Structure probing data (DMS and 2A3) for a 207-nucleotide construct.
RNA sequence: GGGAACGACUCGAGUAGAGUCGAAAAAACUGGAGGGCAAAGCGUGAGGCUGGUUUCACAGAGCAGCGAAUACCUCUGGCUCCUGACAGUGGAGGGAUAACAGGCUGAUGCACUCUCAGCCCAUUGUGCCUAGUGGGCCUGGCCUCUUGAACCAUCACAUCACCAUAUACUUCGGUAUAUGGUGAUGAAAAGAAACAACAACAACAAC
Reactivity to DMS in 0.01 (KOAc 150mM, MgCl2 10mM, bicine 150mM(pH8.5), 24C), signal-to-noise 2, nucleotides 027 to 156: a030a040c080u020g010g000a090g020g030g010c070a080a090a110g000c110g020u000g020a030g040g030c020u000g030g010u010u000u000c040a070c030a240g000a100g050c050a080g100c060g010a090a100u000a040c000c000u010c000u010g060g000c020u000c030c020u000g000a060c000a050g100u000g020g000a080g010g010g000a070u010a090a070c110a030g000g020c030u000g000a090u020g010c000a080c100u010c090u000c010a030g000c000c000c000a080u010u010g000u000g000c000c040u000a180g000u000g000g020g030c030c030u000g010g010c030c000u000c040u010u000g000a130a070c050c010a120u000c080a170
Reactivity to 2A3 in 0.01 (KOAc 150mM, MgCl2 10mM, bicine 150mM(pH8.5), 24C), signal-to-noise 5, nucleotides 027 to 156: a000a020c110u080g020g020a050g000g020g000c060a090a050a020g080c050g060u060g010a010g010g020c010u030g030g020u020u180u190c030a030c010a010g060a030g050c040a010g060c030g080a040a020u090a100c010c000u020c010u030g110g010c010u040c030c090u090g080a060c050a050g030u040g030g000a000g030g010g020a070u080a190a050c030a030g000g040c010u020g010a050u150g050c080a040c110u100c000u010c040a030g000c000c000c020a050u080u220g040u030g020c020c010u070a080g000u030g010g010g000c000c010u020g030g000c000c010u030c010u010u060g030a030a030c020c010a050u090c040a010
The data come from the RNA Mapping Database (RMDB), library ARCHII.